Structure probing data (2A3) for a 177-nucleotide construct. Values cover nucleotides 27 to 126. It was measured as part of the RMDB library OK1LIB. Conditions: 150 mM KOAc, 10 mM MgCl2 and 150 mM bicine (pH 8.5), 24 C.

RNA sequence: GGGAACGACUCGAGUAGAGUCGAAAAGAUCUACAUUGUCCAGUAAUGCUACCAUCCUACCUAGAGAGAGAGGAGAGAAAGUGGUAGGAUGGUAGCUCUCCUCUCUCCUUCUGGUUACGAUGUAGUAGGGAAUAGCAUGGUUCGCCAUGCUAUUCCCAAAAGAAACAACAACAACAAC
Reactivity to 2A3 in 0.01 (KOAc 150mM, MgCl2 10mM, bicine 150mM(pH8.5), 24C), signal-to-noise 2, nucleotides 027 to 126: g110a120u040c000u000a010c000a010u000u040g050u030c030c000a010g020u060a030a120u300g020c030u010a000c010c000a000u010c010c000u010a000c000c020u160a010g030a000g000a010g010a040g030a060g120g110a070g080a040g050a120a210a040g230u190g060g000u030a000g000g000a000u000g020g000u010a000g000c000u000c000u000c000c000u060c000u000c000u040c010c030u070u040c000u000g000g000u050u110a000c000g000a000u000g000u000a000g000u040a070